[RMDB]
RNA sequence: GGGAACGACUCGAGUAGAGUCGAAAAUCAUGCUAACACCAUCUGGGGGUUAGGAUGUAGAGAUACCAUUGGGAGGGCACCCAUCAGCCCCGUACAGGAACCAUCACAACCUUCAUUCAAGCCAGACACUGUUCCCUUUAUUCGUAAAGGGAACAGUAAAAGAAACAACAACAACAAC
Reactivity to DMS in 0.01 (KOAc 150mM, MgCl2 10mM, bicine 150mM(pH8.5), 24C), signal-to-noise 4, nucleotides 027 to 126: u010c010a040u000g000c020u000a030a010c030a080c020c000a280u010c180u010g010g000g020g010g010u000u000a030g010g010a030u000g020u010a060g000a120g000a120u010a110c030c030a090u000u000g000g000g000a110g010g000g020c030a080c040c010c050a070u000c060a070g020c040c030c030c060g020u010a080c090a090g000g010a070a070c070c020a050u000c050a110c070a070a090c050c030u000u000c070a070u010u000c080a050a080g010c030c020a080g010a100c230
Reactivity to 2A3 in 0.01 (KOAc 150mM, MgCl2 10mM, bicine 150mM(pH8.5), 24C), signal-to-noise 3, nucleotides 027 to 126: u050c020a000u060g110c000u020a010a000c040a060c030c000a080u140c150u210g120g000g000g030g000u000u020a010g050g020a010u040g030u110a040g030a000g000a110u090a120c030c030a030u090u130g080g030g000a090g040g030g000c050a210c060c020c000a030u060c040a020g050c020c010c000c030g000u050a040c020a050g060g010a040a010c010c000a030u070c010a020c010a050a070c020c030u040u090c010a060u130u080c040a080a040g030c010c020a010g010a020c010